RNA sequence: GGGAACGACUCGAGUAGAGUCGAAAAAAGCAUAUCAAAAAGCGACUGAAGACAGUAUCGCAUCAGUAGACCGCUUUGCUACAAAUACAGAAGGGAAAGUAAGCUCCUCAACAAAGAAGGUUCUUGGCGAGUAUUUCAAGCUGUCCGAUGGUAUUAGUAGUACUAGGACUUUCGAGUCCUAGUACUAAAAAGAAACAACAACAACAAC
Reactivity to 2A3 in 0.01 (KOAc 150mM, MgCl2 10mM, bicine 150mM(pH8.5), 24C), signal-to-noise 4, nucleotides 027 to 156: a000a010g160c150a180u220a040u230c100a050a120a080a080a020g050c040g070a060c040u020g000a070a020g050a080c010a010g020u080a030u120c020g010c020a040u080c030a060g070u050a010g020a020c000c010g020c060u040u010u030g010c020u060a070c040a050a110a080u160a050c040a030g070a090a040g110g010g010a080a120a030g110u120a100a040g030c040u030c010c010u060c010a040a060c010a030a040a000g040a140a090g000g000u040u020c010u020u050g020g000c020g000a010g050u090a120u070u190u160c040a040a030g000c000u010g010u010c000c010g030a030u070g030g030u020a030u020u070a060g080
Reactivity to DMS in 0.01 (KOAc 150mM, MgCl2 10mM, bicine 150mM(pH8.5), 24C), signal-to-noise 2, nucleotides 027 to 156: a050a070g000c040a090u000a190u010c040a020a080a080a160a130g030c000g000a100c030u000g000a150a070g000a130c040a070g000u010a120u000c020g020c020a120u000c050a110g050u010a060g040a070c010c050g000c010u000u000u000g020c010u000a200c080a030a080a140u000a180c080a110g010a070a070g000g030g000a110a050a070g030u000a100a170g000c070u010c030c010u010c050a050a080c020a000a050a060g010a030a100g020g020u000u000c020u000u000g010g040c030g000a080g000u000a060u000u030u000c100a070a130g030c050u010g010u000c010c030g010a200u000g010g000u000a040u000u000a130g010